This 177-nucleotide RNA was probed chemically with 2A3 and DMS. For 2A3, 1,114 sequencing reads were counted. For DMS the reverse transcriptase was MarathonRT. The RNA was probed in 150 mM KOAc, 10 mM MgCl2 and 150 mM bicine (pH 8.5) at 24 C.
RNA sequence: GGGAACGACUCGAGUAGAGUCGAAAAACACGGAACUUCGGUUCCGUGUAUAGGGACGAAAUAACACGAUAGCGCUUGUCGCCCGAGCAAAAAGGCGGAUAAACUGCAUCCUCUUCGGAGGAUGCAACAAGCACCAUUUCUUCGGAAAUGGUGCUUGAAAAGAAACAACAACAACAAC
Reactivity to 2A3 in 0.01 (KOAc 150mM, MgCl2 10mM, bicine 150mM(pH8.5), 24C), signal-to-noise 1, nucleotides 027 to 126: a000c000a020c010g000g000a000a020c030u040u090c180g140g000u010u000c000c010g000u000g000u000a000u050a020g030g050g030a020c060g050a060a090a040u230a160a050c050a010c120g070a000u040a030g110c040g010c020u060u040g080u060c010g060c020c040c030g090a100g010c090a060a020a070a000a020g040g010c010g010g010a000u120a050a130a010c070u040g000c000a000u000c010c000u020c010u050u050c170g050g000a000g000g020a000u000g000c000a010a000
Reactivity to DMS in 0.01 (KOAc 150mM, MgCl2 10mM, bicine 150mM(pH8.5), 24C), signal-to-noise 1, nucleotides 027 to 126: a020c050a000c030g010g000a020a000c000u000u010c230g050g000u000u000c000c000g030u000g010u000a000u000a050g000g000g000a100c050g000a030a060a080u010a060a090c100a100c060g010a110u010a030g010c040g000c030u000u000g000u020c030g000c000c000c000g000a100g020c150a100a030a010a080a070g020g020c050g000g000a060u020a040a050a080c210u000g000c000a000u000c050c000u030c000u000u000c200g010g010a010g020g010a010u000g000c000a020a010